[RMDB]
RNA sequence: GGGAACGACUCGAGUAGAGUCGAAAAGAUAUGGACCCAGAACUACGGUGGAGCGAAGAACUUUAUCGGAAACGAUAAAGGGAGCUCCUCGCUGGGUCCUAAGUCAAAACCGGCGUUCGCGCCGGAACGAUGUGUAAGACUUCGGUCUUACACAUCGAAAAGAAACAACAACAACAAC
Reactivity to 2A3 in 0.01 (KOAc 150mM, MgCl2 10mM, bicine 150mM(pH8.5), 24C), signal-to-noise 2, nucleotides 027 to 126: g030a000u070a040u140g010g020a010c020c000c000a000g030a140a070c300u300a080c140g130g110u220g120g010a010g000c030g130a300a000g000a070a030c000u000u000u000a000u000c000g000g030a070a070a030c000g000a020u000a000a000a020g000g000g000a000g000c000u000c020c000u000c000g000c000u010g010g000g000u000c000c000u010a010a030g000u000c000a010a000a130a250c020c000g010g000c000g040u080u110c180g000c010g000c160c020g020g000a040a020
Reactivity to DMS in 0.01 (KOAc 150mM, MgCl2 10mM, bicine 150mM(pH8.5), 24C), signal-to-noise 1, nucleotides 027 to 126: g000a030u000a300u010g010g020a020c000c000c000a030g020a110a060c120u030a260c040g020g000u000g000g010a010g020c030g010a060a160g010a080a220c010u000u000u000a000u000c000g000g020a140a050a130c010g000a000u000a010a000a000g000g000g000a140g010c010u000c010c000u000c020g000c000u000g000g000g010u000c000c000u000a000a060g000u010c030a110a020a110a120c000c000g000g020c000g000u000u000c180g030c000g010c000c000g000g000a010a010